Description
Chemical mapping of a 177-nucleotide RNA with 2A3 and DMS. The DMS profile rests on 3,137 reads.

RNA sequence: GGGAACGACUCGAGUAGAGUCGAAAACGGGCCGGAGUAGAGGUGGUUUUAGCAGCGGUCGGAGCCAGCACAACGGUAAAGAGCAGCCGCGGACUUUCCCUUGUGGCCGAUACUACCCUGGCGGAGCCCGUCACUUUUGGUUCGCCAAAAGUGACGGAAAAGAAACAACAACAACAAC
Reactivity to 2A3 in 0.01 (KOAc 150mM, MgCl2 10mM, bicine 150mM(pH8.5), 24C), signal-to-noise 3, nucleotides 027 to 126: c050g050g040g010c000c000g050g010a080g010u120a030g010a110g080g040u140g050g040u020u060u040u100a070g000c090a040g000c010g050g030u110c040g010g040a040g020c030c030a020g010c080a000c050a110a110c100g030g080u150a070a120a040g040a010g020c080a010g030c000c020g020c010g000g010a030c000u050u050u000c030c000c000u000u080g040u040g030g010c000c010g010a030u030a070c010u030a020c000c010c020u020g030g000c000g030g040a040g020c000
Reactivity to DMS in 0.01 (KOAc 150mM, MgCl2 10mM, bicine 150mM(pH8.5), 24C), signal-to-noise 2, nucleotides 027 to 126: c030g000g000g020c040c020g000g010a090g000u020a080g020a150g020g010u010g000g040u010u000u000u020a060g010c050a150g030c020g010g030u000c030g010g020a300g020c020c020a050g030c060a080c170a080a200c130g000g020u040a060a080a120g000a140g000c040a180g000c020c010g000c030g040g000a090c070u000u000u000c010c000c020u010u030g000u000g020g010c000c040g010a150u020a130c090u000a080c010c000c000u000g000g030c010g000g000a110g020c110
For 2A3 the reverse transcriptase was SuperScript II with manganese.